Structure probing data (DMS and 2A3) for a 177-nucleotide construct. The reactions ran in a buffer of 150 mM KOAc, 10 mM MgCl2 and 150 mM bicine (pH 8.5), at 24 C. Values are in units of 0.01, from 0 to 300, in steps of 10. DMS adducts were read by reverse transcription with MarathonRT. Values cover nucleotides 27 to 126. For 2A3 the reverse transcriptase was SuperScript II with manganese.
RNA sequence: GGGAACGACUCGAGUAGAGUCGAAAAAAAGGGAUCCUGAGAUGGGUUCACUACGUCGCGAGACAGUAGGGUUGCUUCUCUGUGGGAGUGUUCAAUGUCUGAAGGGAAGGAGCCUUUAGUACGAGAGUUUAUGAAUUGAUUUCGAUCAAUUCAUAAAAAAAGAAACAACAACAACAAC
Reactivity to DMS in 0.01 (KOAc 150mM, MgCl2 10mM, bicine 150mM(pH8.5), 24C), signal-to-noise 9, nucleotides 027 to 126: a040a060a060g000g010g010a010u000c010c000u000g000a160g000a030u010g000g000g010u000u000c010a090c040u000a030c040g010u000c010g010c270g000a220g010a020c020a100g030u000a020g000g000g010u000u000g000c020u000u000c010u000c020u000g010u070g000g000g000a050g010u010g010u010u030c230a090a080u060g000u010c010u000g010a160a020g000g000g000a060a050g010g010a050g010c000c010u000u000u000a050g000u020a070c090g010a140g000a100g010
Reactivity to 2A3 in 0.01 (KOAc 150mM, MgCl2 10mM, bicine 150mM(pH8.5), 24C), signal-to-noise 8, nucleotides 027 to 126: a000a000a010g070g010g000a020u010c000c010u020g010a020g000a070u070g010g010g010u020u010c020a020c050u050a020c030g040u020c010g000c030g040a040g010a070c050a070g040u060a020g000g040g000u010u020g070c010u010u010c010u000c000u020g080u190g080g070g010a050g050u120g130u170u160c130a110a090u170g090u090c020u070g080a070a020g010g000g010a010a030g020g020a020g000c000c000u070u080u050a100g010u070a030c090g050a040g000a020g130